[RMDB]
RNA sequence: GGGAACGACUCGAGUAGAGUCGAAAACUCCAGCUGAAUCGAAGCGAGUAUCGAUUCAGAGAUCUGACUUGAUGCUUACGCUUAGCACAACUCAAUGUUGUGAUAGCUGGGACAUUGAGUAAUGUACGAUGUUCUGUUAUUUCGAUAAUAGAACAUCAAAAGAAACAACAACAACAAC
Reactivity to DMS in 0.01 (KOAc 150mM, MgCl2 10mM, bicine 150mM(pH8.5), 24C), signal-to-noise 7, nucleotides 027 to 126: c070u010c000c000a060g010c010u010g000a090a090u020c060g010a070a060g010c060g010a090g000u020a030u000c000g010a010u000u000c000a000g000a250g020a110u040c080u020g000a030c050u000u010g000a000u000g010c010u000u010a100c110g020c000u010u010a130g000c020a010c010a010a010c010u010c220a110a080u040g010u000u000g000u000g000a090u010a020g020c000u000g000g000g010a070c050a040u010u010g000a090g000u030a040a070u020g010u020a100c210
Reactivity to 2A3 in 0.01 (KOAc 150mM, MgCl2 10mM, bicine 150mM(pH8.5), 24C), signal-to-noise 9, nucleotides 027 to 126: c010u000c000c000a010g000c000u030g050a060a060u070c060g020a030a000g060c020g020a020g030u030a020u010c000g000a000u000u000c000a000g020a010g040a110u120c020u040g030a010c000u000u010g010a000u010g000c000u060u070a060c080g000c010u020u030a020g000c010a000c000a010a010c000u040c070a120a140u250g000u010u000g000u010g010a030u080a010g000c000u000g000g000g020a020c010a040u040u080g050a030g070u130a110a060u110g030u070a040c110